RNA sequence: GGGAACGACUCGAGUAGAGUCGAAAAGCCGGCGGCACAGGGUUACAGCCCCGUAGGCGCACCCUGGGAUGGACCCCGGCGGAGGUCCCUGAGUAGGGCCGGGCACGUGAAACCCGGUCCGAAGCAGGAGACCUGUUGUUUUCGAACAACAGGUCUCAAAAGAAACAACAACAACAAC
Reactivity to DMS in 0.01 (KOAc 150mM, MgCl2 10mM, bicine 150mM(pH8.5), 24C), signal-to-noise 7, nucleotides 027 to 126: g000c010c000g000g000c200g030g000c030a110c010a010g000g000g010u000u040a090c170a250g010c010c000c120c300g030u040a180g000g010c010g000c300a030c000c000c000u000g000g000g010a150u020g020g000a210c020c040c000c000g000g010c010g000g010a090g010g000u020c000c000c000u000g010a080g010u000a130g000g000g000c000c000g000g000g010c150a080c140g010u060g000a130a150a120c000c000c000g000g010u010c000c000g000a050a190g010c130a110g010
Reactivity to 2A3 in 0.01 (KOAc 150mM, MgCl2 10mM, bicine 150mM(pH8.5), 24C), signal-to-noise 5, nucleotides 027 to 126: g000c000c000g010g010c200g020g010c020a010c000a050g050g000g010u080u240a090c060a060g010c020c000c010c100g240u190a110g000g000c010g010c020a010c000c000c000u010g020g020g090a140u180g130g060a230c000c000c000c000g000g010c020g000g010a030g020g050u040c000c000c000u010g030a040g010u010a030g010g010g000c020c030g010g000g000c160a060c160g160u210g110a080a030a020c010c000c000g000g000u000c000c000g000a000a000g010c030a020g050
Conditions: 150 mM KOAc, 10 mM MgCl2 and 150 mM bicine (pH 8.5), 24 C.
An RNA of 177 nucleotides, treated with DMS and 2A3 and read out base by base.
Values cover nucleotides 27 to 126.